[RMDB]
RNA sequence: GGGAACGACUCGAGUAGAGUCGAAAAGGAGAUGGGCAGCCGGACCCGCGACCGCCUGGACGAGGUGAAGGAGCAGGUGGCGGAGGUGCGCGCCAAGCUGGAGGAGCAGGCCCAGCAGAUACGCCUGCUGGCGAACGUAAUUCGUUACGUUCGCCAGAAAAGAAACAACAACAACAAC
Reactivity to DMS in 0.01 (KOAc 150mM, MgCl2 10mM, bicine 150mM(pH8.5), 24C), signal-to-noise 3, nucleotides 027 to 126: g020g000a060g000a120u010g020g000g020c050a150g020c080c030g020g000a140c090c000c010g030c060g000a120c040c020g030c010c020u000g010g010a130c140g020a100g010g040u000g020a150a100g000g010a180g000c040a050g020g010u000g020g020c030g020g000a100g000g010u000g020c060g030c070g010c000c030a070a120g000c010u000g010g010a130g000g010a130g020c020a030g000g000c030c010c000a030g000c020a110g000a120u000a080c150g000c030c000u000g010
Reactivity to 2A3 in 0.01 (KOAc 150mM, MgCl2 10mM, bicine 150mM(pH8.5), 24C), signal-to-noise 2, nucleotides 027 to 126: g100g030a090g030a080u120g020g010g000c030a020g060c060c030g040g060a040c000c000c000g040c000g070a100c000c020g040c010c020u030g020g060a050c080g090a110g140g090u300g130a030a030g060g030a070g060c090a100g000g040u060g030g010c020g030g040a040g010g050u120g020c080g010c040g000c000c020a040a010g040c020u020g030g030a100g000g020a040g020c020a000g000g000c000c000c000a000g000c000a020g020a070u100a050c040g020c000c020u040g000